Chemical mapping of a 177-nucleotide RNA with DMS and 2A3. The reactions ran in a buffer of 150 mM KOAc, 10 mM MgCl2 and 150 mM bicine (pH 8.5), at 24 C. For 2A3, 4,340 sequencing reads were counted. 2A3 adducts were read by reverse transcription with SuperScript II with manganese.
RNA sequence: GGGAACGACUCGAGUAGAGUCGAAAAGAUCCCAGCAGAUAGUUGGGUAAGGUCAGUGUUCUCUUCCAGUGUGUCUGGGAGAACUGGCUAGGGCUGGGGGAGGGAAGGGCCAGGGAUGGUUCCUGGGCCUCUUGCAUACGUUCGCGUAUGCAAGAGGAAAAGAAACAACAACAACAAC
Reactivity to DMS in 0.01 (KOAc 150mM, MgCl2 10mM, bicine 150mM(pH8.5), 24C), signal-to-noise 4, nucleotides 027 to 126: g010a130u000c000c000c000a060g010c080a130g010a170u010a060g020u000u000g010g010g010u020a150a220g000g000u010c020a030g000u000g000u000u010c160u000c010u000u010c010c010a010g010u000g030u010g010u020c000u000g000g010g000a020g010a030a030c010u000g000g000c000u000a180g010g010g000c130u000g000g000g000g000g000a130g000g000g000a110a100g010g000g000c050c040a050g000g000g010a140u010g000g010u000u000c000c010u000g000g010g000
Reactivity to 2A3 in 0.01 (KOAc 150mM, MgCl2 10mM, bicine 150mM(pH8.5), 24C), signal-to-noise 3, nucleotides 027 to 126: g050a080u100c010c000c000a000g030c020a010g110a300u300a100g090u140u090g020g000g010u100a120a080g030g010u010c020a010g010u020g230u300u070c060u010c000u120u000c000c000a010g000u080g030u030g100u300c000u000g000g020g010a010g010a000a010c010u010g020g000c010u010a040g080g040g000c190u200g040g010g000g040g080a160g000g000g000a090a060g030g010g030c030c030a020g030g000g020a080u210g100g030u070u050c010c000u000g000g020g010